The data come from the RNA Mapping Database (RMDB), library OK2TST. Chemical mapping of a 177-nucleotide RNA with DMS and 2A3. For DMS the reverse transcriptase was MarathonRT.
RNA sequence: GGGAACGACUCGAGUAGAGUCGAAAACAGCGAUGGAGUAUCUAUAGCGGUAAUAUCGAGAUAACGCGGCGCUGAGGGCUGUGCGGUAUUGGGGUCAUCACUGACCAACCGGCUACAAAUACGUGCCGGUGAAGUCAGAAUUCGUUCUGACUUCACCAAAAGAAACAACAACAACAAC
Reactivity to DMS in 0.01 (KOAc 150mM, MgCl2 10mM, bicine 150mM(pH8.5), 24C), signal-to-noise 5, nucleotides 027 to 126: c070a090g020c060g020a080u000g010g010a180g020u010a060u000c030u010a100u000a090g000c020g010g000u000a080a070u010a070u010c040g020a110g000a100u010a060a190c080g010c030g010g010c030g020c060u010g000a120g000g010g020c030u000g020u000g030c050g010g000u000a050u010u010g010g010g000g010u000c020a020u010c180a080c190u000g000a060c020c050a160a060c040c020g010g000c010u000a030c040a050a080a090u000a090c160g000u010g000c060c070
Reactivity to 2A3 in 0.01 (KOAc 150mM, MgCl2 10mM, bicine 150mM(pH8.5), 24C), signal-to-noise 4, nucleotides 027 to 126: c020a000g060c030g060a040u120g070g050a070g060u070a030u000c040u060a090u090a080g010c040g060g010u070a100a050u050a040u170c060g010a010g020a180u090a130a070c030g020c010g040g030c060g010c130u060g050a130g040g080g000c020u020g010u040g070c020g030g040u030a070u050u170g050g000g000g000u010c010a020u050c030a040c090u020g000a020c010c000a000a010c010c010g010g020c000u060a020c040a030a090a000u120a060c040g010u050g060c050c010

The reactions ran in a buffer of 150 mM KOAc, 10 mM MgCl2 and 150 mM bicine (pH 8.5), at 24 C.
For 2A3 the reverse transcriptase was SuperScript II with manganese.
The DMS profile rests on 4,769 reads.
As a SHAPE reagent, 2A3 marks flexible, mostly unpaired nucleotides at the ribose 2'-OH.